[RMDB]
RNA sequence: GGGAACGACUCGAGUAGAGUCGAAAAUAAUGGGAUUAGGUUCUGUAAGGUGGUUGUCAUCCCAUACGCCCAUCCAAUGGAUCCCCUCGUAUCAUCACAGUGAUUGACAAUUCCAGUUUGCUAUAAGUCAGAGGGAAUGGUUCGCCAUUCCCUCUGAAAAAGAAACAACAACAACAAC
Reactivity to DMS in 0.01 (KOAc 150mM, MgCl2 10mM, bicine 150mM(pH8.5), 24C), signal-to-noise 3, nucleotides 027 to 126: u030a120a050u010g000g000g000a050u020u020a090g020g000u010u000c040u000g010u010a120a130g010g020u010g000g010u010u010g020u030c110a110u010c020c010c010a060u000a050c140g010c050c000c020a040u000c070c060a060a060u010g000g010a080u000c010c010c010c060u000c070g000u000a070u010c070a030u010c060a070c120a050g000u000g000a090u010u000g000a070c090a070a080u000u000c020c010a050g000u000u000u010g050c050u010a110u010a040a100g010

The data come from the RNA Mapping Database (RMDB), library OK2TST. Structure probing data (DMS) for a 177-nucleotide construct. The RNA was probed in 150 mM KOAc, 10 mM MgCl2 and 150 mM bicine (pH 8.5) at 24 C. For DMS, 2,420 sequencing reads were counted.